[RMDB]
RNA sequence: GGGAACGACUCGAGUAGAGUCGAAAAGCGCUGGGCUGGCGUUCGCGACGCGAGGCUGGAUGGCCUUCCCCAUUAUGAUUCUUCUCGCUUCCGGCGGCCCGCGUUGCAGGCCAUGCUGUCCAGGCAGCACCAUGUUGAUGUUCGCAUCAACAUGGUGAAAAGAAACAACAACAACAAC
Reactivity to 2A3 in 0.01 (KOAc 150mM, MgCl2 10mM, bicine 150mM(pH8.5), 24C), signal-to-noise 3, nucleotides 027 to 126: g020c170g010c090u030g000g020g000c010u030g020g000c010g110u120u100c090g010c000g010a000c020g030c010g060a140g040g000c020u050g050g100a210u080g070g010c010c040u040u060c030c000c020c010a080u200u280a150u240g140a090u100u050c020u100u010c040u010c040g040c000u070u030c030c020g020g000c000g000g010c020c010c000g000c000g000u000u010g000c000a010g060g000c010c010a030u180g030c020u060g040u000c000c000a020g020g000c000a010g020
Reactivity to DMS in 0.01 (KOAc 150mM, MgCl2 10mM, bicine 150mM(pH8.5), 24C), signal-to-noise 5, nucleotides 027 to 126: g010c020g010c010u000g000g000g010c020u000g010g010c020g010u010u000c160g010c010g010a020c020g020c010g020a090g020g010c010u000g010g010a100u000g020g020c050c040u000u000c020c000c010c100a140u000u010a080u010g000a100u010u000c070u000u000c050u000c070g010c100u000u000c010c010g010g010c030g000g010c020c020c010g010c010g010u000u000g020c020a080g000g000c010c020a060u020g010c080u010g000u000c020c020a020g010g010c020a180g010
This 177-nucleotide RNA was probed chemically with 2A3 and DMS. High 2A3 reactivity points to a flexible backbone, as in loops and unpaired stretches. For 2A3, 6,382 sequencing reads were counted. Values cover nucleotides 27 to 126. The RNA was probed in 150 mM KOAc, 10 mM MgCl2 and 150 mM bicine (pH 8.5) at 24 C.